[RMDB]
RNA sequence: GGGAACGACUCGAGUAGAGUCGAAAAUUUGCCAUCAAGUAACUCGGUCAGCUUACCCAGUAGCGUGGGCCGGAACUUCUCCCACAUAGCCAACACCCUCCGCGCCUGGUCAUUGCUCAGGCGCUGGCCAGAAGAUCUGGUUCGCCAGAUCUUCUGGAAAAGAAACAACAACAACAAC
Reactivity to DMS in 0.01 (KOAc 150mM, MgCl2 10mM, bicine 150mM(pH8.5), 24C), signal-to-noise 1, nucleotides 027 to 126: u000u010u020g010c050c040a080u000c090a070a010g010u000a050a120c080u010c040g030g020u000c020a110g010c030u010u010a110c080c030c110a120g040u010a030g030c100g050u000g000g010g010c050c050g040g010a060a050c040u000u010c080u000c040c030c030a060c090a060u020a110g040c000c010a030a050c050a240c000c000c010u010c000c040g010c010g000c010c000u000g030g010u010c080a190u010u000g000c050u000c030a010g010g030c010g050c030u010g010g000

An RNA of 177 nucleotides, treated with DMS and read out base by base. DMS adducts were read by reverse transcription with MarathonRT. Source: RMDB library OK2TST, as collected in RNAgym.